RNA sequence: GGGAACGACUCGAGUAGAGUCGAAAAAGGACAUCGGGCUCUCAAGCGCGACAUCGUGUUCGGCGUUGAGAUCCUCAACGACGCGAAGAUCGGCGCUCGUAGCUGGCUGUCGCGAGACAGCUUCUGGCGAAAGGCUUGGGCGUUCAACAGGGACACCCACACACCGUGAAUUCGUUCACGGUGUGUGAAAAGAAACAACAACAACAAC
Reactivity to 2A3 in 0.01 (KOAc 150mM, MgCl2 10mM, bicine 150mM(pH8.5), 24C), signal-to-noise 2, nucleotides 027 to 156: a000g020g000a010c030a050u070c070g000g000g030c030u000c020u020c050a080a020g010c020g020c000g050a060c000a040u110c050g060u040g090u290u020c030g050g010c060g000u000u040g010a020g020a290u070c030c030u000c000a020a020c010g050a010c030g000c020g190a050a010g010a060u060c050g020g000c000g020c010u000c020g030u000a020g000c040u030g020g000c010u010g000u020c000g000c050g050a030g010a010c000a010g000c000u040u040c060u080g050g000c010g030a080a030a050g090g000c080u060u030g080g010g010c030g000u070u060c020a110a070c060a070g060g000g000a010c020a090c030c040
Reactivity to DMS in 0.01 (KOAc 150mM, MgCl2 10mM, bicine 150mM(pH8.5), 24C), signal-to-noise 1, nucleotides 027 to 156: a040g020g030a080c070a120u030c090g030g020g030c000u000c050u000c020a050a040g020c000g000c010g010a060c050a240u000c070g030u000g030u000u000c000g000g000c040g020u000u000g010a050g000a100u010c060c020u000c040a040a060c000g000a050c060g000c070g000a080a230g010a190u010c030g050g030c070g050c000u020c110g030u000a130g010c060u000g000g030c000u000g020u000c080g000c170g020a300g000a050c000a010g000c000u000u000c060u010g030g010c020g030a070a070a090g010g000c020u010u020g030g020g040c070g020u000u000c020a080a100c100a070g010g000g030a120c090a070c060c010
Conditions: 150 mM KOAc, 10 mM MgCl2 and 150 mM bicine (pH 8.5), 24 C. This 207-nucleotide RNA was probed chemically with 2A3 and DMS. For 2A3 the reverse transcriptase was SuperScript II with manganese. Values cover nucleotides 27 to 156. DMS adducts were read by reverse transcription with MarathonRT. For 2A3, 1,385 sequencing reads were counted.